An RNA of 207 nucleotides, treated with DMS and 2A3 and read out base by base. The 2A3 profile rests on 1,838 reads. DMS adducts were read by reverse transcription with MarathonRT.
RNA sequence: GGGAACGACUCGAGUAGAGUCGAAAAAGGACGAGAGCAUUGUUAGGACCUUUGGGACAAGCGACGCAUACAGUUGAUCCACACUAACGUUGGUGUCGACAUACUAUCAGUCUCUAAGGAUUGAAAGUAAGUUGAUAAUGACCAAGUCAAGGUCCAGGCCUACUAUUAACUUCGGUUAAUAGUAGGCAAAAGAAACAACAACAACAAC
Reactivity to DMS in 0.01 (KOAc 150mM, MgCl2 10mM, bicine 150mM(pH8.5), 24C), signal-to-noise 3, nucleotides 027 to 156: a060g010g010a100c030g010a080g010a060g030c050a110u000u000g000u000u000a080g030g010a060c000c070u000u030u020g010g010g000a080c070a050a090g010c020g010a060c070g020c080a180u000a080c070a090g020u000u000g000a140u000c030c020a130c050a100c090u010a070a060c040g020u000u010g030g010u000g020u000c010g030a020c000a150u000a010c000u000a120u000c000a020g020u000c010u020c110u010a190a160g000g020a030u000u000g010a040a150a040g060u000a010a070g030u000u000g000a020u000a050a080u010g000a100c010c040a030a090g030u000c020a070a100g010g010u000c010c020a080g010
Reactivity to 2A3 in 0.01 (KOAc 150mM, MgCl2 10mM, bicine 150mM(pH8.5), 24C), signal-to-noise 3, nucleotides 027 to 156: a000g110g010a030c050g010a040g020a000g080c070a060u050u080g070u140u150a070g010g050a040c010c000u050u060u100g030g000g000a040c050a110a000g090c040g050a010c050g010c080a040u080a170c030a090g000u000u030g090a100u050c050c010a060c000a000c080u100a150a030c080g050u030u050g060g000u020g010u010c010g000a000c010a010u050a000c000u020a060u100c020a000g010u000c030u000c070u200a090a060g080g000a010u010u020g010a020a000a000g020u040a000a060g010u010u010g030a020u060a140a090u080g030a020c020c010a030a020g060u090c040a060a010g000g000u000c000c000a020g000